[RMDB]
RNA sequence: GGGAACGACUCGAGUAGAGUCGAAAACUCAAGGAUUGGAGACUCCAUCUUUACAGGCUGUACUGGCUCUUGGAACAAGGUCACUCAAAUUGCUAACAUGUUCUUGGAACAGACUCAGCAUUCCCUUAAAGAUUCAUGUUCGCAUGAAUCAAAAGAAACAACAACAACAAC
Reactivity to 2A3 in 0.01 (KOAc 150mM, MgCl2 10mM, bicine 150mM(pH8.5), 24C), signal-to-noise 9, nucleotides 027 to 129: c040u040c050a020a030g070g020a070u110u220g030g010a120g070a100c080u020c040c000a040u010c010u030u070u070a080c060a040g080g000c010u010g020u070a040c020u030g050g020c030u000c010u020u030g020g010a000a010c010a060a090g080g020u090c050a040c040u110c040a070a150a230u190u150g030c030u080a070a040c020a080u050g010u020u000c000u020u040g020g010a010a010c010a030g140a300c020u010c040a000g000c000a030u010u010c000c000c000u010u130a110a090a010
Reactivity to DMS in 0.01 (KOAc 150mM, MgCl2 10mM, bicine 150mM(pH8.5), 24C), signal-to-noise 9, nucleotides 027 to 129: c060u020c070a090a020g000g000a080u070u090g000g040a100g020a120c130u040c020c020a050u020c020u020u010u030a120c160a030g000g030c000u020g020u000a060c040u010g010g010c070u030c010u020u020g000g010a050a050c030a060a090g050g030u000c100a090c110u080c130a050a090a100u050u050g030c070u020a060a060c090a080u000g010u010u010c030u020u010g050g020a020a030c030a000g040a150c100u020c050a000g020c030a070u000u000c010c010c060u040u100a060a080a060

About this RNA: The record gives the reactivity of an RNA of 170 nucleotides to 2A3 and DMS. Values cover nucleotides 27 to 129. The RNA was probed in 150 mM KOAc, 10 mM MgCl2 and 150 mM bicine (pH 8.5) at 24 C. DMS adducts were read by reverse transcription with MarathonRT. Source: RMDB library 15KLIB, as collected in RNAgym.